[RMDB]
RNA sequence: GGGAACGACUCGAGUAGAGUCGAAAAUCCUAAGUCAGAAUGCCAUGGAGCCGAAGAACUAACGUGGAGUGCUCGGAAACGAGCACUAUGAAGCGUUAGGGAGGCUCCAGGCGGAUUCUGAUAUGGAAAAACUGGGUCAACUUCGGUUGACCCAGAACUAAUACCAUAACUUCGGUUAUGGUAUUAGAAAAGAAACAACAACAACAAC
Reactivity to DMS in 0.01 (KOAc 150mM, MgCl2 10mM, bicine 150mM(pH8.5), 24C), signal-to-noise 1, nucleotides 027 to 156: u000c000c010u000a090a300g020u010c010a020g000a060a020u000g010c020c010a170u010g020g050a020g070c010c000g000a180a230g000a240a210c020u000a040a020c000g020u000g020g000a020g020u000g000c010u000c010g030g000a090a030a170c040g020a020g020c000a020c000u000a010u000g000a130a300g010c000g030u000u000a040g000g000g010a200g030g020c000u000c000c000a000g000g030c050g000g030a040u000u010c020u000g010a050u000a160u000g010g020a000a100a100a150a200c020u000g000g000g010u000c010a000a040c000u000u010c300g070g030u010u000g030a010c000c000c010a000g010a030a070
Reactivity to 2A3 in 0.01 (KOAc 150mM, MgCl2 10mM, bicine 150mM(pH8.5), 24C), signal-to-noise 2, nucleotides 027 to 156: u040c010c000u040a120a030g000u020c010a010g010a020a010u020g020c030c060a300u090g020g000a000g000c010c030g140a300a050g010a060a050c010u000a000a000c010g030u010g010g050a000g000u000g000c000u000c000g010g050a030a040a010c000g000a000g030c030a000c000u000a100u020g020a000a000g020c000g000u000u000a000g010g000g000a000g000g000c030u000c000c000a000g000g000c000g010g020a010u010u000c000u000g000a000u020a070u130g000g040a000a120a110a010a060c020u000g000g000g000u000c010a010a000c010u020u040c290g090g000u000u000g000a000c000c000c010a000g000a000a000